[RMDB]
RNA sequence: GGGAACGACUCGAGUAGAGUCGAAAACUCUGAGUGUGUCGAAAGAGGUUGGUGCGGUUGAGCAAGUGAAAACCCGCUUUCAAGGUUUCCAUAUUUGUGUUUUGUUCCGCUUUCCGUGCAGCGUCAAAGUUUUAGAGAAAUUCGUUUCUCUAAAACUAAAAGAAACAACAACAACAAC
Reactivity to DMS in 0.01 (KOAc 150mM, MgCl2 10mM, bicine 150mM(pH8.5), 24C), signal-to-noise 9, nucleotides 027 to 126: c030u000c020u010g010a170g020u010g020u010g010u000c040g010a070a100a090g000a080g010g010u000u000g010g030u000g010c090g010g010u000u000g010a130g020c060a050a080g020u000g000a040a030a060a060c040c020c050g000c160u000u000u000c160a100a100g010g010u000u000u000c020c010a050u000a090u010u010u000g010u010g000u010u000u000u010g010u000u000c040c030g000c040u000u000u000c030c020g000u010g010c070a080g010c060g010u000c090a070a100
Reactivity to 2A3 in 0.01 (KOAc 150mM, MgCl2 10mM, bicine 150mM(pH8.5), 24C), signal-to-noise 3, nucleotides 027 to 126: c000u000c050u060g030a070g050u100g010u020g030u090c050g090a100a080a030g070a040g000g060u060u080g060g000u040g000c060g000g080u040u100g080a040g050c030a050a070g050u020g060a040a020a000a020c010c000c020g000c130u040u100u100c080a040a050g020g010u000u030u020c020c000a010u060a150u150u140u090g080u010g040u000u100u050u100g050u080u050c000c000g010c000u020u040u000c020c000g030u020g020c030a030g040c010g070u060c040a110a050

The data come from the RNA Mapping Database (RMDB), library OK2TST. Chemical mapping of a 177-nucleotide RNA with DMS and 2A3. For DMS the reverse transcriptase was MarathonRT. As a SHAPE reagent, 2A3 marks flexible, mostly unpaired nucleotides at the ribose 2'-OH. The reactions ran in a buffer of 150 mM KOAc, 10 mM MgCl2 and 150 mM bicine (pH 8.5), at 24 C. The 2A3 profile rests on 3,893 reads. For DMS, 18,445 sequencing reads were counted.